RNA sequence: GGGAACGACUCGAGUAGAGUCGAAAAGGCUGCGUAUCACUCUAGGGUACGUGAUAGUGCGAUAUAAGCAGCACUGGUACAUGCCGGCAGGGACAGUUAAGAGAUGGCCGCAGUCUCGUGUCCCUGCAAAAGGAGUUCUCGUUCGCGAGAACUCCAACGUAAACUUCGUGUUCGCACGAAGUUUACGAAAAGAAACAACAACAACAAC
Reactivity to DMS in 0.01 (KOAc 150mM, MgCl2 10mM, bicine 150mM(pH8.5), 24C), signal-to-noise 2, nucleotides 027 to 156: g000g000c000u000g000c000g060u000a030u000c030a030c030u000c060u030a110g000g020g050u010a040c060g050u000g020a080u000a020g010u000g030c030g010a110u000a070u000a100a150g030c080a060g010c000a110c020u000g030g000u000a070c180a140u000g010c020c020g040g000c020a010g000g020g020a040c000a030g030u000u010a060a190g010a020g020a040u010g020g000c090c150g020c090a300g000u000c010u000c000g000u000g010u000c000c010c000u020g020c000a020a000a070a070g000g000a040g030u010u000c010u000c000g030u010u010c300g010c010g000a040g030a000a010c020u000c020c000a010a020
Reactivity to 2A3 in 0.01 (KOAc 150mM, MgCl2 10mM, bicine 150mM(pH8.5), 24C), signal-to-noise 3, nucleotides 027 to 156: g020g000c000u020g000c020g000u010a010u010c020a060c150u150c100u090a100g120g050g000u050a010c030g010u040g020a060u110a040g000u010g010c030g010a030u010a010u020a190a070g050c050a000g000c010a030c010u040g000g070u120a090c040a050u200g010c000c010g030g000c010a000g000g000g000a000c010a050g030u120u160a160a030g000a000g000a010u030g070g000c100c040g020c050a020g010u000c010u000c000g040u030g000u010c010c000c000u000g000c000a000a000a000a000g000g000a000g010u000u010c000u000c020g020u040u080c230g020c010g070a010g000a000a000c000u000c000c000a000a000
Record summary
Chemical mapping of a 207-nucleotide RNA with DMS and 2A3. For 2A3, 3,095 sequencing reads were counted. It was measured as part of the RMDB library M2RFPK. Reactivities are given for positions 27 through 156.